[RMDB]
RNA sequence: GGGAACGACUCGAGUAGAGUCGAAAAACUACGACGCUGGGAAGACCCACACUAUCAGGCUACCCACCUAUCUGAAGCGCGCACGGAUAGAGGCCUGACGAAUGUGUGGUCUUCCUGUGCUGAAGCGCGCACGGCAACCGAAAGGUGCGGAAUACCCCAUGCAUUGAGACUUCGGUCUCAAUGCAUGAAAAGAAACAACAACAACAAC
Reactivity to 2A3 in 0.01 (KOAc 150mM, MgCl2 10mM, bicine 150mM(pH8.5), 24C), signal-to-noise 1, nucleotides 027 to 156: a000c070u090a020c080g210a000c000g020c000u010g000g010g010a000a000g000a000c030c050c000a000c010a000c020u040a020u030c000a010g000g000c000u030a070c110c120c050a070c020c000u000a000u080c000u020g020a300a090g020c000g000c000g000c000a000c000g110g000a000u000a000g000a000g000g010c000c000u010g010a050c080g130a300a300u020g000u000g040u130g010g000u060c000u000u000c000c000u000g000u000g000c000u020g030a140a050g000c010g000c000g000c000a000c000g000g000c000a000a000c010c000g020a130a050a080g050g040u020g000c010g030g020a000a060u190a170c000c000c000